[RMDB]
RNA sequence: GGGAACGACUCGAGUAGAGUCGAAAAUAGUCUUAUAGCUGUAUAGCUCCGCAUCUAUAAGACGUGGACUUCAUGCGGUGCUAUACAGGAAGUCCACACGGUGGAGAUGCGAAAGCAUUUCCACCGAGCACCAUCAUGCCUUCGGGCAUGAUGGUGCAAAAGAAACAACAACAACAAC
Reactivity to 2A3 in 0.01 (KOAc 150mM, MgCl2 10mM, bicine 150mM(pH8.5), 24C), signal-to-noise 1, nucleotides 027 to 126: u200a010g040u000c050u140u120a150u020a060g090c010u010g010u030a030u000a000g000c000u000c010c000g030c000a000u030c030u060a130u010a290a000g130a090c060g000u060g090g000a080c070u000u010c100a070u050g010c000g020g070u010g050c000u060a000u000a000c030a000g020g000a000a040g040u000c010c010a020c000a000c030g030g000u000g010g020a000g010a000u000g000c030g090a080a030a000g000c000a010u000u000u000c000c000a000c010c000g000a000